[RMDB]
RNA sequence: GGGAACGACUCGAGUAGAGUCGAAAAAUCCCAACUUAAUAACUUACAACAUUAGUAGGUGACCAAACAUUUACUAAUAUGACUGUAGUUUUCCUUGGACUCAGUGUUACGUAUUAUUCUUAGCUACCAUCUCAGCAAUGUUCGCAUUGCUGAGAUGAAAAGAAACAACAACAACAAC
Reactivity to DMS in 0.01 (KOAc 150mM, MgCl2 10mM, bicine 150mM(pH8.5), 24C), signal-to-noise 2, nucleotides 027 to 126: a150u000c000c020c000a100a060c180u010u000a070a030u010a070a040c050u000u030a040c020a090a150c100a020u000u000a000g010u000a000g010g020u000g010a110c140c140a110a110a170c010a000u000u010u030a000c000u010a030a000u000a080u010g010a050c030u000g020u000a010g010u000u010u020u000c090c090u010u010g000g010a040c020u010c080a020g020u000g010u000u000a020c130g000u000a040u000u000a040u000u020c140u000u000a100g000c140u040a030c180
Reactivity to 2A3 in 0.01 (KOAc 150mM, MgCl2 10mM, bicine 150mM(pH8.5), 24C), signal-to-noise 1, nucleotides 027 to 126: a000u000c000c010c000a000a020c000u050u080a090a070u080a070a010c020u070u190a020c020a270a020c010a070u010u000a000g010u000a000g020g000u030g020a130c100c000a110a040a030c010a060u000u060u000a010c010u040a000a020u060a050u100g060a030c010u020g030u120a000g060u010u000u000u120c070c030u040u130g040g000a010c000u000c030a020g050u050g030u130u130a060c080g050u050a160u080u040a100u130u010c030u080u030a030g090c020u010a060c010
Source: RMDB library RFMREP, as collected in RNAgym. The record gives the reactivity of an RNA of 177 nucleotides to DMS and 2A3. 2A3 adducts were read by reverse transcription with SuperScript II with manganese.